[RMDB]
RNA sequence: GGGAACGACUCGAGUAGAGUCGAAAAUUUGUCAACGAUCUUGGCGGCGAUCUGGCCUGCUUGAUUGGUGAUCUGGUACCCGCAUGCGUUGACGUCGACGACCACAUUGUUGGCCACGCUCAUCGCGCGACUACGGCACAUUCGUGUGCCGUAGUCGAAAAGAAACAACAACAACAAC
Reactivity to DMS in 0.01 (KOAc 150mM, MgCl2 10mM, bicine 150mM(pH8.5), 24C), signal-to-noise 2, nucleotides 027 to 126: u000u000u010g020u000c000a030a030c030g010a050u040c040u010u020g000g010c010g010g000c080g000a150u010c130u010g010g000c040c050u030g010c030u010u000g000a050u000u020g010g000u000g030a020u000c160u020g010g010u010a160c160c030c020g010c190a050u000g010c000g030u000u010g010a000c120g000u000c160g010a110c090g010a040c000c040a010c070a200u010u010g010u000u000g010g020c030c020a050c040g000c110u000c050a030u000c050g020c040g000
Reactivity to 2A3 in 0.01 (KOAc 150mM, MgCl2 10mM, bicine 150mM(pH8.5), 24C), signal-to-noise 2, nucleotides 027 to 126: u070u060u110g050u000c020a000a020c010g010a070u020c020u080u110g150g000c000g010g000c040g080a280u070c140u100g190g000c000c030u050g060c030u080u050g050a020u050u110g010g000u020g030a020u070c080u080g000g070u040a110c010c010c050g030c050a060u170g000c020g060u010u030g010a020c020g030u080c030g040a150c060g150a180c000c030a090c030a200u120u230g130u100u050g000g000c030c000a010c010g040c020u000c000a080u000c030g000c000g010
Chemical mapping of a 177-nucleotide RNA with DMS and 2A3.
For 2A3, 1,335 sequencing reads were counted.
Values cover nucleotides 27 to 126.
DMS adducts were read by reverse transcription with MarathonRT.
Source: RMDB library OK2TST, as collected in RNAgym.